[RMDB]
RNA sequence: GGGAACGACUCGAGUAGAGUCGAAAACUCCAUAUCCGGAUUCCUGUGGAGCAUUGCAGGAGGCCCGUUAAGCUGGUCCUCGAAGACUCAAACGUGCAUUGCCACUAGCUCCACAGAAUCGGAGUACUGACCGGGCAGGGUUCGCCCUGCCCGGUCAAAAAGAAACAACAACAACAAC
Reactivity to 2A3 in 0.01 (KOAc 150mM, MgCl2 10mM, bicine 150mM(pH8.5), 24C), signal-to-noise 1, nucleotides 027 to 126: c010u050c040c000a000u000a140u130c020c020g120g060a060u000u000c000c010u000g050u030g010g000a040g040c120a220u000u100g000c010a030g010g140a060g000g000c140c010c000g080u020u000a140a010g100c190u160g000g020u060c020c020u150c140g170a300a010g000a000c000u000c170a060a000a000c010g000u050g000c000a070u000u240g050c020c020a020c050u000a050g030c000u050c000c000a010c000a000g000a000a020u000c000g040g000a000g000u000a150c050

The data come from the RNA Mapping Database (RMDB), library OK1LIB.
An RNA of 177 nucleotides, treated with 2A3 and read out base by base.
The 2A3 profile rests on 375 reads.
Values cover nucleotides 27 to 126.